Source: RMDB library OK3TST, as collected in RNAgym. Structure probing data (2A3 and DMS) for a 207-nucleotide construct. The reactions ran in a buffer of 150 mM KOAc, 10 mM MgCl2 and 150 mM bicine (pH 8.5), at 24 C. 2A3 adducts were read by reverse transcription with SuperScript II with manganese. Values are in units of 0.01, from 0 to 300, in steps of 10. For DMS the reverse transcriptase was MarathonRT. For DMS, 2,323 sequencing reads were counted.
RNA sequence: GGGAACGACUCGAGUAGAGUCGAAAAAGAAGAGGAAUUAGAUAUAAUGAUUCAUCUAAAAGGGCCCAGAACCUUCCCUGGCUUAAAGAAACUUCUCAGGCUCAGAUAUGGCCUCCUAGCCAGCUCAGCUAGACUUACUAGGUCUAGAAGGAUGGGAUGACCAUUUAAUGUUCGCAUUAAAUGGUCAAAAAGAAACAACAACAACAAC
Reactivity to 2A3 in 0.01 (KOAc 150mM, MgCl2 10mM, bicine 150mM(pH8.5), 24C), signal-to-noise 2, nucleotides 027 to 156: a000g100a040a010g000a010g030g000a050a040u050u110a030g080a110u100a050u200a300a080u160g010a000u070u080c050a000u000c030u070a000a020a000a120g040g050g000c020c000c010a000g060a090a070c010c030u020u050c050c000c000u000g020g000c000u020u110a010a130a110g080a130a100a070c060u300u250c120u020c060a020g030g000c040u080c270a020g040a180u210a200u110g040g020c000c000u000c000c020u030a010g000c000c050a010g010c040u080c070a010g000c000u020a000g000a000c010u090u080a100c070u100a070g120g000u000c000u000a010g010a020a000g020g010a010u050g010g000g050a000
Reactivity to DMS in 0.01 (KOAc 150mM, MgCl2 10mM, bicine 150mM(pH8.5), 24C), signal-to-noise 1, nucleotides 027 to 156: a070g000a110a030g000a080g020g010a080a040u000u000a050g000a270u000a140u010a120a140u010g000a000u000u010c000a090u000c030u020a060a040a070a080g020g030g000c060c030c150a160g020a060a100c000c000u000u000c020c010c010u000g000g010c060u040u010a050a060a180g000a110a050a040c050u000u000c030u010c060a050g010g020c010u010c060a100g010a170u010a040u010g000g010c000c000u000c010c060u000a050g000c010c000a040g000c080u000c060a080g020c120u000a000g000a050c000u000u000a110c160u000a090g010g020u000c000u000a060g030a050a060g010g000a110u000g000g000g000a170